RNA sequence: GGGAACGACUCGAGUAGAGUCGAAAAUAAUAACUUGGUGCCUACCUAUGUUAAAAGUGACACUAUCGUUGCAGCCGAUUUGGGUGUUCUUAUUCAGAAUAAUGCUAAGCAUGUACAGGCUAAUGUUGCUAAAGCCGCUAAUGUGGCUUGCAUUUGGCCGAGAAUACAUAUUCGUAUGUAUUCUCGGAAAAGAAACAACAACAACAAC
Reactivity to 2A3 in 0.01 (KOAc 150mM, MgCl2 10mM, bicine 150mM(pH8.5), 24C), signal-to-noise 2, nucleotides 027 to 156: u170a010a030u090a000a030c020u000u040g000g000u030g080c000c000u010a050c030c020u110a120u170g020u080u090a020a080a020a060g030u060g040a020c000a000c010u070a060u230c050g020u020u010g030c020a030g040c020c070g000a020u040u000u140g020g010g000u160g020u030u000c000u010u020a070u080u180c020a000g010a000a010u110a070a010u060g050c090u050a020a030g010c020a010u050g020u080a060c040a020g000g020c000u010a040a040u100g040u130u020g040c010u030a030a020a020g010c010c000g010c120u120a160a120u120g040u040g040g000c000u000u040g020c000a020u050u000u130g060g040
Reactivity to DMS in 0.01 (KOAc 150mM, MgCl2 10mM, bicine 150mM(pH8.5), 24C), signal-to-noise 1, nucleotides 027 to 156: u010a070a080u000a020a060c060u020u000g000g020u000g000c020c010u010a090c050c030u010a050u000g000u010u000a050a050a070a080g010u000g030a070c010a040c030u000a060u000c030g030u010u010g000c020a060g000c020c040g000a090u000u000u010g000g020g060u010g020u000u000c000u000u000a030u010u020c040a060g010a060a070u000a040a070u010g010c000u010a030a070g020c010a020u000g000u010a070c040a060g010g000c070u010a050a110u000g010u020u000g000c010u010a020a050a030g000c020c020g020c010u020a060a070u000g020u000g010g040c000u000u000g030c060a170u010u000u000g010g020
Overview
Chemical mapping of a 207-nucleotide RNA with 2A3 and DMS. Conditions: 150 mM KOAc, 10 mM MgCl2 and 150 mM bicine (pH 8.5), 24 C. For DMS the reverse transcriptase was MarathonRT. Source: RMDB library OK3TST, as collected in RNAgym. Values cover nucleotides 27 to 156. 2A3 adducts were read by reverse transcription with SuperScript II with manganese.